[RMDB]
RNA sequence: GGGAACGACUCGAGUAGAGUCGAAAAGCCUAAGCGUUCGCGCUUAGGCAAAGAAAGCGAAAACGCAACCCCAACGGAAAGGCGAAUUCCGAACAACCAUAAAAAGUUGCCUCUUCGGAGGCAACAAGUACAGAUAGGUGUUCGCACCUAUCUGUACAAAAGAAACAACAACAACAAC
Reactivity to 2A3 in 0.01 (KOAc 150mM, MgCl2 10mM, bicine 150mM(pH8.5), 24C), signal-to-noise 2, nucleotides 027 to 126: g010c000c000u010a020a010g000c010g000u010u140c210g020c000g000c140u000u000a010g010g000c000a020a000a000g010a010a030a000g040c040g080a120a080a010a150c030g000c010a020a040c030c000c000c000a050a030c010g000g010a030a030a030g090g000c040g050a070a070u020u030c000c010g010a050a020c070a020a040c030c040a050u190a120a130a040a020a040g010u000u000g000c010c000u010c010u000u060c220g050g000a000g000g000c000a010a010c000a000a000
Reactivity to DMS in 0.01 (KOAc 150mM, MgCl2 10mM, bicine 150mM(pH8.5), 24C), signal-to-noise 2, nucleotides 027 to 126: g030c000c010u010a000a020g030c000g030u000u040c280g040c020g060c000u000u000a010g000g010c000a000a010a060g040a040a100a120g010c090g000a070a030a090a120c040g030c000a080a190c060c000c020c300a030a130c090g000g030a020a030a060g010g000c060g000a090a090u000u000c010c010g020a170a070c120a020a040c090c050a110u030a060a080a070a140a070g000u000u000g020c000c000u000c000u000u020c150g020g000a000g000g010c000a000a000c000a000a020

Chemical mapping of a 177-nucleotide RNA with 2A3 and DMS. Values are in units of 0.01, from 0 to 300, in steps of 10. It was measured as part of the RMDB library M2PK50. The RNA was probed in 150 mM KOAc, 10 mM MgCl2 and 150 mM bicine (pH 8.5) at 24 C.